[RMDB]
RNA sequence: GGGAACGACUCGAGUAGAGUCGAAAAACGUUGAUAUGGAUUUACUCCGAGGAGACGAACUACCACGAACAGGGGAGACUCUACCCGUGGCGUCUCCGUUUGACGAGUAAGUCCGAAGUCAACAUGCAAGCUCUCCUCUUCGGAGGAGAGAAAAGAAACAACAACAACAAC
Reactivity to 2A3 in 0.01 (KOAc 150mM, MgCl2 10mM, bicine 150mM(pH8.5), 24C), signal-to-noise 6, nucleotides 027 to 129: a000c070g000u010u000g010a020u030a080u300g020g000a000u000u000u000a000c000u000c000c000g010a030g010g000a010g020a010c010g020a080a050c080u130a050c100c000a000c000g040a100a010c020a120g000g000g010g020a070g020a030c010u010c010u040a030c030c030c010g000u000g000g000c000g000u000c010u000c020c000g020u050u030u080g030a020c000g000a000g000u000a000a000g010u000c000c000g000a040a000g000u010c000a000a010c000a020u100g060c030a060a110g020
Reactivity to DMS in 0.01 (KOAc 150mM, MgCl2 10mM, bicine 150mM(pH8.5), 24C), signal-to-noise 4, nucleotides 027 to 129: a000c140g000u040u010g000a000u020a070u150g000g000a010u000u010u000a010c030u030c000c020g030a050g000g020a000g020a040c000g030a140a030c150u040a300c000c000a030c000g040a060a290c210a030g020g000g020g000a110g030a130c030u010c010u000a130c170c110c030g020u000g000g040c070g010u020c000u030c010c000g030u040u050u100g020a170c300g000a010g020u040a010a020g000u040c010c010g020a030a040g010u030c030a020a000c030a070u100g050c100a100a060g010

This 170-nucleotide RNA was probed chemically with 2A3 and DMS.
The 2A3 profile rests on 27,254 reads.
For 2A3 the reverse transcriptase was SuperScript II with manganese.